This 177-nucleotide RNA was probed chemically with DMS and 2A3. Source: RMDB library M2PK50, as collected in RNAgym. For 2A3 the reverse transcriptase was SuperScript II with manganese. Reactivities are given for positions 27 through 126. The 2A3 profile rests on 4,175 reads.

RNA sequence: GGGAACGACUCGAGUAGAGUCGAAAAUAUUACAUCUUCGGAUGUAAUAACUGGUGGUCGCUGGCUUGUUGCUAGUGGCGCAACUGUUGCCAUGACUGCGCAAUCGCUCUGAAUUCGUUCAGAGCAACUCUGUUAUCCAGUUCGCUGGAUAACAGAGAAAAGAAACAACAACAACAAC
Reactivity to DMS in 0.01 (KOAc 150mM, MgCl2 10mM, bicine 150mM(pH8.5), 24C), signal-to-noise 3, nucleotides 027 to 126: u000a020u000u000a000c000a000u000c000u000u010c210g030g000a010u000g000u000a000a020u000a030a130c080u010g010g040u000g010g010u000c010g030c180u000g010g010c020u010u000g020u000u000g010c010u000a110g020u010g010g000c110g020c010a020a030c060u000g010u010u000g010c000c020a050u010g000a030c050u000g000c040g010c190a110a090u020c160g000c000u000c000u000g000a030a030u000u010c190g010u000u000c000a010g010a010g010c000a040a040
Reactivity to 2A3 in 0.01 (KOAc 150mM, MgCl2 10mM, bicine 150mM(pH8.5), 24C), signal-to-noise 5, nucleotides 027 to 126: u040a000u000u010a010c000a010u010c000u040u050c210g150g010a000u010g000u010a000a000u010a020a040c070u100g080g000u030g000g000u010c020g000c160u020g000g020c030u050u120g020u060u040g050c010u060a080g200u070g280g020c070g040c030a010a020c030u140g300u300u110g040c000c000a000u060g000a010c010u020g000c070g000c050a030a120u140c120g000c010u010c000u010g020a020a020u080u050c190g080u100u000c010a000g000a010g000c000a000a000